[RMDB]
RNA sequence: GGGAACGACUCGAGUAGAGUCGAAAAAGACCGGGGAGCUUCGAAGAUCUCUCUAUUCUCCAGAAAGGAGGAAGGAGCUCUCGAACGCCCCCCCGACCCUCGGAUGGGCCGCUUCCGGCAGGGAAGCUCAGUCGUCACUUCGGUGACGACAAAAGAAACAACAACAACAAC
Reactivity to 2A3 in 0.01 (KOAc 150mM, MgCl2 10mM, bicine 150mM(pH8.5), 24C), signal-to-noise 3, nucleotides 027 to 129: a000g100a020c050c050g000g000g000g000a040g000c010u000u000c000g050a180a030g000a010u000c010u000c000u000c000u010a270u040u010c000u010c000c010a070g260a260a130a120g030g000a000g000g000a000a070g000g000a000g020c020u000c000u000c000g000a010a000c110g000c010c000c000c000c000c000c000g020a070c000c000c000u010c010g070g030a050u050g020g100g000c000c060g020c000u000u000c000c050g060g100c130a060g090g000g000a040a000g000c000u010c030a020
Reactivity to DMS in 0.01 (KOAc 150mM, MgCl2 10mM, bicine 150mM(pH8.5), 24C), signal-to-noise 3, nucleotides 027 to 129: a040g050a120c170c030g030g100g000g020a190g020c020u020u030c000g020a150a070g030a010u000c000u010c010u040c020u040a160u020u020c030u000c020c030a280g020a040a070a110g040g000a000g000g000a040a120g010g020a010g030c160u000c010u030c000g010a000a010c140g000c000c000c000c000c000c000c000g010a070c020c020c010u020c080g000g010a050u000g000g030g030c020c020g000c060u010u000c020c010g020g030c170a150g080g010g000a100a120g030c050u030c160a110